[RMDB]
The record gives the reactivity of an RNA of 207 nucleotides to 2A3 and DMS.
DMS adducts were read by reverse transcription with MarathonRT.
The RNA was probed in 150 mM KOAc, 10 mM MgCl2 and 150 mM bicine (pH 8.5) at 24 C.
For DMS, 8,555 sequencing reads were counted.
2A3 adducts were read by reverse transcription with SuperScript II with manganese.
RNA sequence: GGGAACGACUCGAGUAGAGUCGAAAAUUUCGUGAACCACGAAUGCUGCUGUCUGAUCCUUCCUCUGGAAGUUUUGUCUCAGAGGAGUACCCGGCCGUCUGAGGUGUCAGUCUGCCCCUACUGGGGGGUGCCUCCCAGUUAGGCUGCUCAGGGGUCAAGGAAAAUCAUUAUUCGUAAUGAUUUUCCUAAAAGAAACAACAACAACAAC
Reactivity to 2A3 in 0.01 (KOAc 150mM, MgCl2 10mM, bicine 150mM(pH8.5), 24C), signal-to-noise 3, nucleotides 027 to 156: u030u040u020c010g000u030g060a110a070c090c010a010c080g010a010a030u070g010c030u030g010c010u020g060u140c040u060g040a080u060c020c010u040u040c010c010u080c020u030g030g060a080a070g050u070u120u270u250g110u050c050u010c080a000g000a010g010g010a000g000u010a030c020c010c020g000g020c010c000g130u100c020u010g010a010g000g050u080g100u080c010a030g040u000c020u060g050c000c030c020c000u020a020c020u020g000g000g010g000g020g040u130g120c000c000u030c000c000c000a000g000u010u030a010g010g000c010u030g000c000u030c020a000g030g000g000g010u020c030a010
Reactivity to DMS in 0.01 (KOAc 150mM, MgCl2 10mM, bicine 150mM(pH8.5), 24C), signal-to-noise 2, nucleotides 027 to 156: u000u000u000c040g020u010g020a140a220c070c030a060c020g010a070a090u010g020c000u000g010c020u000g010u000c030u010g000a260u000c050c030u000u000c010c010u000c020u030g020g020a030a050g000u000u000u000u010g020u010c010u000c010a010g030a070g000g030a050g000u000a040c030c010c050g030g010c010c030g000u020c030u000g000a070g000g040u000g030u010c050a110g010u000c050u000g000c030c020c020c020u000a060c030u010g000g000g030g010g010g030u010g000c120c020u010c010c010c010a050g010u000u010a040g010g010c010u000g010c030u000c040a140g000g020g040g020u010c040a150
Source: RMDB library OK3TST, as collected in RNAgym.